[RMDB]
RNA sequence: GGGAACGACUCGAGUAGAGUCGAAAACGCAGAGGGUUCUCAUAACAAAGAACCUAGAUAGCCGCAUCGGUAUUAUAGGAUGUAGUCGGUGAGCCGGAAUGCCUGCAUCGUAAGCCUAUAAGUAAAUUUAAGUGUAAUCACUUCGGUGAUUACACAACAAACUCUAUAGCUUCGGCUAUAGAGUUUGAAAAGAAACAACAACAACAAC
Reactivity to DMS in 0.01 (KOAc 150mM, MgCl2 10mM, bicine 150mM(pH8.5), 24C), signal-to-noise 1, nucleotides 027 to 156: c090g030c030a050g030a170g020g000g030u000u000c000u000c000a110u010a110a160c200a140a050a010g010a020a050c090c000u000a060g020a240u010a150g000c060c030g000c100a120u000c060g010g000u010a110u000u010a020u000a030g040g020a050u000g020u010a150g050u000c000g000g050u000g010a110g030c030c060g010g020a070a200u020g020c020c030u010g010c010a090u000c010g010u000a070a100g000c000c040u000a070u000a000a030g010u010a100a070a160u020u020u000a080a150g010u020g010u000a000a020u000c000a000c000u010u000c300g060g050u000g010a000u010u000a030c000a000c000a020a080
Reactivity to 2A3 in 0.01 (KOAc 150mM, MgCl2 10mM, bicine 150mM(pH8.5), 24C), signal-to-noise 3, nucleotides 027 to 156: c060g020c020a040g030a060g190g000g000u010u000c020u010c010a130u140a150a010c060a080a070a010g000a000a000c000c000u000a030g040a110u100a070g070c090c080g080c060a070u080c080g080g000u110a040u170u020a050u100a050g020g010a020u040g020u060a030g100u060c040g010g020u040g010a020g030c000c130g100g050a070a020u060g050c020c040u080g000c010a020u010c040g030u030a020a020g020c000c000u030a050u020a130a020g040u050a030a150a250u190u240u160a190a030g000u000g000u000a000a000u000c000a000c020u020u060c170g080g010u000g000a000u000u000a000c000a000c000a000a000
This 207-nucleotide RNA was probed chemically with DMS and 2A3. The DMS profile rests on 2,175 reads.